[RMDB]
RNA sequence: GGGAACGACUCGAGUAGAGUCGAAAAGAUAUGGAUCGUGGUCAGCAACAGCUCCGGGUCGGAAACGACCCAGGAGACAUGCUGUCACGAUCCUAAGUCAAACUCGGGGCACUUCGGUGCCCCGAGAGUAUUGUUGUAGCUUCGGCUACAACAAUACAAAAGAAACAACAACAACAAC
Reactivity to 2A3 in 0.01 (KOAc 150mM, MgCl2 10mM, bicine 150mM(pH8.5), 24C), signal-to-noise 2, nucleotides 027 to 126: g000a000u010a000u040g000g010a000u000c000g010u010g010g100u300c010a000g000c080a090a240c050a300g000c000u000c000c000g020g020g000u000c000g000g000a020a010a000c000g000a000c000c040c040a030g000g010a000g000a000c010a280u300g000c000u000g000u000c000a010c010g000a000u000c000c000u000a010a000g000u010c010a020a030a140c000u000c000g000g000g030g000c020a010c010u090u090c300g140g000u020g050c090c000c000c000g000a000g000a000
Reactivity to DMS in 0.01 (KOAc 150mM, MgCl2 10mM, bicine 150mM(pH8.5), 24C), signal-to-noise 2, nucleotides 027 to 126: g000a010u000a010u020g010g000a000u000c010g030u000g000g010u020c010a010g000c000a170a090c230a190g000c000u000c000c000g000g000g020u000c010g020g000a010a000a010c000g010a010c010c000c000a020g010g000a010g010a000c040a270u010g030c010u010g010u010c010a010c000g020a000u000c000c020u010a000a050g010u000c010a150a150a260c000u000c000g010g020g010g010c000a010c000u000u020c230g010g030u000g000c010c000c000c000g000a000g000a050

Structure probing data (2A3 and DMS) for a 177-nucleotide construct. DMS adducts were read by reverse transcription with MarathonRT. The DMS profile rests on 3,594 reads. It was measured as part of the RMDB library TTRDES.